[RMDB]
RNA sequence: GGGAACGACUCGAGUAGAGUCGAAAACAAACUCGCUCCCCGACCCCCUGUCACCACACGCAGAGGUGCACAGGCAGAGAGCAGGCCAUGUGCAGCCUCCUGGCGAGCCAGUCACGCCGAGUGACACAAUUGAUAAGGCUUUCGAGCCUUAUCAAUUAAAAGAAACAACAACAACAAC
Reactivity to DMS in 0.01 (KOAc 150mM, MgCl2 10mM, bicine 150mM(pH8.5), 24C), signal-to-noise 5, nucleotides 027 to 126: c070a110a090a120c100u000c050g020c070u000c020c010c010c020g010a270c030c020c020c000c020u000g000u000c010a040c040c050a080c190a110c160g020c120a100g000a040g020g000u000g010c030a000c000a040g010g010c030a080g000a140g000a110g040c140a110g000g010c010c020a080u000g030u000g010c010a060g000c000c000u000c030c060u010g000g010c010g020a110g010c050c050a060g010u010c060a040c030g010c070c060g010a180g010u000g000a030c030a050c170
An RNA of 177 nucleotides, treated with DMS and read out base by base.
The RNA was probed in 150 mM KOAc, 10 mM MgCl2 and 150 mM bicine (pH 8.5) at 24 C.
Source: RMDB library OK2TST, as collected in RNAgym.
DMS adducts were read by reverse transcription with MarathonRT.